[RMDB]
RNA sequence: GGGAACGACUCGAGUAGAGUCGAAAACGAGCACGCUCGCGCUUAAGGAGCAGUGGAUGAUGGGGGAUGCACUGCUGAUCACCCCAGUGCUGAGGAAGGGCGCGAAUGCCACAAAAGGGUACUUUCCUCGCGUAGUUUUUUUCGAAAAACUACGCGAAAAAGAAACAACAACAACAAC
Reactivity to 2A3 in 0.01 (KOAc 150mM, MgCl2 10mM, bicine 150mM(pH8.5), 24C), signal-to-noise 2, nucleotides 027 to 126: c030g060a060g040c090a000c130g100c040u030c000g050c000g040c030u130u070a070a040g110g010a080g040c000a000g050u030g040g220a070u160g030a100u100g120g000g000g000g000a020u070g070c010a040c100u140g000c020u060g030a060u030c040a240c030c000c000c030a020g020u100g060c020u030g010a000g020g070a030a050g020g000g000c000g020c030g020a040a030u070g020c040c010a120c030a020a110a040a020g080g020g000u040a100c000u000u010u010c040c000
Reactivity to DMS in 0.01 (KOAc 150mM, MgCl2 10mM, bicine 150mM(pH8.5), 24C), signal-to-noise 2, nucleotides 027 to 126: c100g000a130g020c060a060c180g040c100u000c020g000c020g010c050u000u000a110a090g030g020a130g010c000a050g010u000g020g000a040u000g020a110u000g000g020g000g010g020a060u000g000c040a030c060u010g010c030u000g020a080u000c060a140c070c010c000c060a030g020u000g000c060u000g010a060g000g010a050a140g010g020g000c000g020c020g000a020a130u000g010c030c130a100c130a070a080a040a100g030g020g000u010a070c060u000u000u000c060c040
Notes:
This 177-nucleotide RNA was probed chemically with 2A3 and DMS. The reactions ran in a buffer of 150 mM KOAc, 10 mM MgCl2 and 150 mM bicine (pH 8.5), at 24 C. For 2A3, 1,158 sequencing reads were counted. 2A3 adducts were read by reverse transcription with SuperScript II with manganese.